RNA sequence: GGGAACGACUCGAGUAGAGUCGAAAAUCAACCAACCUGGUAUAGCUGGGUGGAAACUCCAUUUCCACUACCCCAAAAGCUUGCUAAGUCUUGCAUUGACCACUGGCUGCGAGGUUGCAUGUAAGUCCGGUAACACUUAUUUCGAUAAGUGUUACCGAAAAGAAACAACAACAACAAC
Reactivity to 2A3 in 0.01 (KOAc 150mM, MgCl2 10mM, bicine 150mM(pH8.5), 24C), signal-to-noise 5, nucleotides 027 to 126: u080c010a020a040c020c000a000a030c010c000u060g000g040u060a120u120a200g030c010u050g080g000g000u010g020g030a000a020a010c080u050c060c020a080u010u020u000c010c000a020c030u080a140c010c020c000c000a030a150a000a020g000c000u050u070g000c010u050a160a040g010u000c020u050u120g070c030a130u030u150g040a040c010c010a050c090u040g030g010c010u020g000c010g020a020g020g010u020u030g030c050a040u110g070u100a060a040g070u040c050
Reactivity to DMS in 0.01 (KOAc 150mM, MgCl2 10mM, bicine 150mM(pH8.5), 24C), signal-to-noise 6, nucleotides 027 to 126: u010c100a090a130c200c040a050a070c050c030u020g000g010u000a040u010a050g020c030u000g000g010g000u010g010g000a020a010a080c120u020c180c150a230u010u000u000c000c000a020c030u000a200c070c020c020c060a080a090a110a050g000c020u000u000g010c020u000a050a100g000u000c030u000u000g000c140a070u010u000g020a050c030c030a080c060u000g010g010c020u000g000c050g010a060g010g020u000u000g020c170a080u000g010u000a090a070g000u010c080
Source information
Structure probing data (2A3 and DMS) for a 177-nucleotide construct. The DMS profile rests on 5,953 reads. The reactions ran in a buffer of 150 mM KOAc, 10 mM MgCl2 and 150 mM bicine (pH 8.5), at 24 C. For 2A3, 10,247 sequencing reads were counted.